[RMDB]
RNA sequence: GGGAACGACUCGAGUAGAGUCGAAAAAUGUCUGUUAGAUCAACUGGUAGAGCUUGUGACUAUGCAUAUCUUCUGUGUCCUUACUGAUUUUUUACUAAUGCUACAGUGUAUUGAUAGUUAUGUUAAAGGUCACUUUUAGAUUCGUCUAAAAGUGACCAAAAGAAACAACAACAACAAC
Reactivity to 2A3 in 0.01 (KOAc 150mM, MgCl2 10mM, bicine 150mM(pH8.5), 24C), signal-to-noise 2, nucleotides 027 to 126: a020u070g010u000c000u010g100u090u100a050g020a160u090c030a060a080c050u050g030g030u040a040g000a010g110c040u030u090g030u040g050a040c060u050a050u120g020c010a050u070a050u160c040u110u060c010u040g100u010g030u010c020c000u050u020a040c010u050g110a140u110u060u070u020u080u120a090c050u060a020a030u080g040c000u010a020c040a080g010u000g090u160a080u100u090g050a050u040a040g040u080u070a100u200g090u060u130a110a050a030
Reactivity to DMS in 0.01 (KOAc 150mM, MgCl2 10mM, bicine 150mM(pH8.5), 24C), signal-to-noise 3, nucleotides 027 to 126: a060u000g010u000c020u000g010u000u000a080g000a100u000c060a100a080c080u000g000g010u000a080g000a120g030c050u010u000g010u000g000a060c070u000a050u000g000c060a070u000a060u000c060u000u000c040u010g020u000g010u000c030c030u000u010a080c080u000g000a010u000u000u010u010u020u010a090c070u000a060a060u000g000c030u010a050c030a050g010u000g020u000a060u010u000g010a080u000a030g010u010u000a060u000g000u010u000a050a080a120